[RMDB]
RNA sequence: GGGAACGACUCGAGUAGAGUCGAAAACCACUGCCCACAAAAACUAAUCUUGUGGAAACUCCCAAAGAAUGGCAGUUGGAUUUGCCUUGUGAUAAGAUUCCAAGUGUGUUAACCACUACUGAUGAGAAGCACUUCAAUGAUUCGUCAUUGAAGUGCUAAAAGAAACAACAACAACAAC
Reactivity to DMS in 0.01 (KOAc 150mM, MgCl2 10mM, bicine 150mM(pH8.5), 24C), signal-to-noise 3, nucleotides 027 to 126: c010c010a080c090u000g020c080c010c020a030c070a030a030a120a110a090c220u020a140a110u010c140u000u000g030u000g010g000a130a060a190c100u010c010c020c030a110a100a130g020a100a070u000g010g000c000a020g010u010u000g010g000a110u000u010u000g010c010c000u000u000g020u000g030a090u010a090a090g000a170u020u000c010c030a070a040g000u000g020u000g000u000u010a060a080c110c030a040c090u000a090c060u000g000a080u020g010a090g000a150
Reactivity to 2A3 in 0.01 (KOAc 150mM, MgCl2 10mM, bicine 150mM(pH8.5), 24C), signal-to-noise 2, nucleotides 027 to 126: c010c010a060c030u070g000c000c020c020a020c030a050a100a000a040a080c110u110a130a110u130c090u070u030g010u000g050g000a080a010a020c060u060c010c000c000a020a030a030g180a120a050u150g050g020c020a000g010u110u100g030g040a060u140u000u110g020c010c000u050u060g020u030g100a040u040a190a180g060a150u140u070c040c010a030a030g000u040g010u020g070u200u080a040a050c000c050a000c020u130a050c030u080g110a150u020g030a090g030a040
Notes: This 177-nucleotide RNA was probed chemically with DMS and 2A3. It was measured as part of the RMDB library OK2TST. For DMS, 1,545 sequencing reads were counted. Conditions: 150 mM KOAc, 10 mM MgCl2 and 150 mM bicine (pH 8.5), 24 C. For 2A3, 993 sequencing reads were counted. High DMS reactivity at an A or C suggests that its Watson-Crick edge is free.